[RMDB]
RNA sequence: GGGAACGACUCGAGUAGAGUCGAAAAGAUAUGGAGCAGAACUACCUUCGACGAGUACGAAGAACUCGGAAACGAGGGAGUACUCCAAGAAGGCUGCUCCUAAGUCAAAGCAUUCUUCGGAAUGCAAGACUGGAUACUGGUUCGCCAGUAUCCAGUCAAAAGAAACAACAACAACAAC
Reactivity to 2A3 in 0.01 (KOAc 150mM, MgCl2 10mM, bicine 150mM(pH8.5), 24C), signal-to-noise 1, nucleotides 027 to 126: g010a010u080a020u210g020g000a010g000c010a010g050a140a110c120u180a100c240c000u010u000c000g020a030c000g010a000g000u000a000c000g110a300a110g060a080a030c000u000c010g000g080a080a060a020c020g010a000g010g010g000a020g010u010a000c000u040c000c000a050a000g000a010a000g000g000c000u000g000c010u010c000c000u000a010a000g000u000c040a100a030a030g020c010a030u000u040c010u090u080c160g100g020a020a020u020g020c010a000a000
Reactivity to DMS in 0.01 (KOAc 150mM, MgCl2 10mM, bicine 150mM(pH8.5), 24C), signal-to-noise 1, nucleotides 027 to 126: g000a030u000a300u000g000g000a020g000c040a000g030a080a050c030u060a300c040c000u000u000c020g000a300c300g010a000g000u040a000c000g000a120a120g000a060a110c000u000c000g000g000a020a080a130c000g000a010g000g020g030a080g000u000a000c000u020c000c020a080a300g000a030a020g040g000c000u000g000c010u000c020c000u000a000a060g000u000c010a080a090a130g020c020a000u010u000c000u000u020c180g020g000a000a000u000g000c000a040a090
This 177-nucleotide RNA was probed chemically with 2A3 and DMS.
As a SHAPE reagent, 2A3 marks flexible, mostly unpaired nucleotides at the ribose 2'-OH.
It was measured as part of the RMDB library TTRDEL.
For DMS, 759 sequencing reads were counted.
2A3 adducts were read by reverse transcription with SuperScript II with manganese.
DMS adducts were read by reverse transcription with MarathonRT.
The reactions ran in a buffer of 150 mM KOAc, 10 mM MgCl2 and 150 mM bicine (pH 8.5), at 24 C.